[RMDB]
The record gives the reactivity of an RNA of 177 nucleotides to 2A3 and DMS.
RNA sequence: GGGAACGACUCGAGUAGAGUCGAAAAAAUAAUUUUCCUAAUGACAUGUUGUAGGAGAGUCAAUCGACCGGAAUCUAUGCAACGCAGCCUCGGAGAGACAGGGAGGAAGGUGUCGGUCACCUCCCAACGGAACGUAGAAGUUCGCUUCUACGUUCCGAAAAGAAACAACAACAACAAC
Reactivity to 2A3 in 0.01 (KOAc 150mM, MgCl2 10mM, bicine 150mM(pH8.5), 24C), signal-to-noise 2, nucleotides 027 to 126: a000a000u300a180a080u080u020u000u030c020c000u150a220a110u100g070a070c040a080u130g000u040u000g040u140a020g010g020a080g020a020g000u040c050a000a130u080c140g050a110c000c000g020g020a030a030u040c080u120a050u180g120c050a030a000c020g000c030a090g020c000c000u030c030g020g100a020g000a000g040a060c060a060g030g000g000a000g000g060a040a040g130g000u070g030u050c020g000g020u040c000a000c000c000u000c060c030c000a000a000
Reactivity to DMS in 0.01 (KOAc 150mM, MgCl2 10mM, bicine 150mM(pH8.5), 24C), signal-to-noise 1, nucleotides 027 to 126: a070a070u020a070a150u060u000u000u010c010c000u000a090a160u080g000a030c300a190u040g090u000u000g010u000a090g000g000a110g040a050g000u000c070a050a080u020c090g020a090c000c050g000g000a060a090u000c000u010a010u020g000c070a010a130c090g010c090a000g000c000c020u000c000g020g020a100g040a060g000a090c170a020g000g000g000a090g040g000a150a080g050g000u000g000u000c040g050g000u020c110a300c000c090u000c000c010c010a080a110
DMS adducts were read by reverse transcription with MarathonRT.
2A3 adducts were read by reverse transcription with SuperScript II with manganese.
For 2A3, 1,068 sequencing reads were counted.
For DMS, 1,134 sequencing reads were counted.